[RMDB]
RNA sequence: GGGAACGACUCGAGUAGAGUCGAAAAGCUUUGGUCACGUAAGAAAUAAGCGUUUUUUAGUCGUACUCAGCCGGCUCGUACUCUGCCGGCUCGAACUCGGCCGGGCCAGCGCCGGGCGGCGCAAUCCACCAAUCUCAUAGUUCGCUAUGAGAUUGGUAAAAGAAACAACAACAACAAC
Reactivity to 2A3 in 0.01 (KOAc 150mM, MgCl2 10mM, bicine 150mM(pH8.5), 24C), signal-to-noise 3, nucleotides 027 to 126: g010c020u060u100u150g050g000u050c050a030c130g070u090a130a040g090a170a140a080u200a140a070g080c040g040u080u020u000u020u050u170a060g020u030c000g000u020a040c020u000c040a000g010c010c000g010g000c000u030c040g080u080a110c070u070c100u170g000c020c000g030g010c000u000c020g010a000a010c010u000c020g020g020c000c010g020g000g040c010c020a050g030c030g010c020c000g100g200g050c150g030g000c010g060c050a020a060u030c040c000
Reactivity to DMS in 0.01 (KOAc 150mM, MgCl2 10mM, bicine 150mM(pH8.5), 24C), signal-to-noise 4, nucleotides 027 to 126: g000c030u000u010u020g020g020u000c040a080c080g010u000a120a110g000a070a100a060u010a100a100g000c100g000u000u000u000u010u010u010a070g020u000c030g010u000a110c110u000c050a060g000c020c000g000g000c010u000c120g020u010a120c140u000c040u000g020c010c010g000g010c020u010c050g010a040a130c080u000c040g010g020c000c030g020g000g000c040c040a090g000c060g020c040c040g010g020g010c130g020g000c020g020c110a090a040u010c110c090